This 177-nucleotide RNA was probed chemically with DMS. The reactions ran in a buffer of 150 mM KOAc, 10 mM MgCl2 and 150 mM bicine (pH 8.5), at 24 C.
RNA sequence: GGGAACGACUCGAGUAGAGUCGAAAAGAUAUGGAAGCGCACCUGUCACGAAGCUACAGAGGUCGAUCGGAAACGAUCGACUCCCCACCUGUAGAACUACUUCAGUGACAGGUGCGCUUCCUAAGUCCUACUUAUCUAACUUCGGUUAGAUAAGUAGAAAAGAAACAACAACAACAAC
Reactivity to DMS in 0.01 (KOAc 150mM, MgCl2 10mM, bicine 150mM(pH8.5), 24C), signal-to-noise 3, nucleotides 027 to 126: g010a120u010a280u010g010g000a000a010g010c000g000c000a020c010c010u000g000u000c010a050c010g000a020a010g020c010u000a010c000a010g010a140g050g000u000c000g040a000u020c010g000g000a100a140a280c020g010a010u000c000g030a010c000u010c020c020c010c030a300c060c000u000g000u000a010g000a030a040c070u020a300c030u000u000c000a090g020u000g000a010c000a000g000g030u010g000c000g000c000u000u010c000c000u000a010a090g000u010c050